Notes:
Chemical mapping of a 207-nucleotide RNA with 2A3. Values cover nucleotides 27 to 156. The RNA was probed in 150 mM KOAc, 10 mM MgCl2 and 150 mM bicine (pH 8.5) at 24 C.
[RMDB]
RNA sequence: GGGAACGACUCGAGUAGAGUCGAAAAGGGGUCCGAUGUGCCAGGAUCGACGCGGAGCGAGGAUCAUACUGAAGCCUCCACGGUAUGGGAGCUCCCAUCGAUCCGAUAAUUCAUCGGACGGAGGCACCCAAAACCAGAAUGCUUCGGCAUUCUGGAACUAACUUCUCAUCUUCGGAUGAGAAGUUAGAAAAGAAACAACAACAACAAC
Reactivity to 2A3 in 0.01 (KOAc 150mM, MgCl2 10mM, bicine 150mM(pH8.5), 24C), signal-to-noise 3, nucleotides 027 to 156: g030g010g040g000u000c010c010g000a010u010g040u060g160c280c080a110g000g000a000u000c000g000a010c030g030c300g040g000a010g000c010g010a190g000g020a000u010c000a010u000a000c030u030g050a170a010g000c000c000u000c000c000a010c010g000g000u010a000u000g000g010g010a010g000c000u000c000c010c000a000u010c000g000a000u010c000c000g000a000u020a000a040u030u000c000a000u000c000g010g000a000c020g000g000a000g000g010c000a050c000c000c010a030a110a030a070c000c000a000g000a000a000u010g000c010u070u220c300g160g000c010a000u010u010c000u000g000g030a000a010